[RMDB]
RNA sequence: GGGAACGACUCGAGUAGAGUCGAAAACGUUAUAUCGUAGACGGGGCGGCGGUUGCUGAAAUGAAAGGAAUCAUUGAACGCCAUCAGGCCAAAUGAUUUUUACCGUUGCAUCAUGUCGCCCAAUAUGCACCGGAAUAGAAUUCGUUCUAUUCCGGUGAAAAGAAACAACAACAACAAC
Reactivity to 2A3 in 0.01 (KOAc 150mM, MgCl2 10mM, bicine 150mM(pH8.5), 24C), signal-to-noise 6, nucleotides 027 to 126: c010g010u090u090a220u050a060u300c070g030u060a040g040a120c060g030g000g000g000c000g000g000c000g010g000u030u010g000c030u100g060a050a080a100u140g040a100a030a020g050g040a000a000u010c000a000u010u020g030a140a040c090g010c010c010a100u230c150a110g010g000c010c010a000a030a020u010g000a010u010u010u020u050u060a070c060c060g030u030u050g000c000a000u020c010a080u090g000u000c000g010c000c000c010a010a010u150a090u120g030
Reactivity to DMS in 0.01 (KOAc 150mM, MgCl2 10mM, bicine 150mM(pH8.5), 24C), signal-to-noise 6, nucleotides 027 to 126: c070g010u000u010a090u020a060u020c040g010u010a060g020a130c300g010g010g000g020c000g030g010c010g010g020u000u000g010c020u000g010a090a050a060u000g010a080a200a140g000g010a020a000u000c010a000u000u000g010a100a150c300g000c000c000a130u040c280a100g020g020c010c050a130a040a010u000g000a000u000u000u000u010u020a110c300c060g000u010u010g000c000a000u000c020a040u020g020u000c000g010c010c000c020a030a020u000a070u010g000

Structure probing data (2A3 and DMS) for a 177-nucleotide construct. The reactions ran in a buffer of 150 mM KOAc, 10 mM MgCl2 and 150 mM bicine (pH 8.5), at 24 C.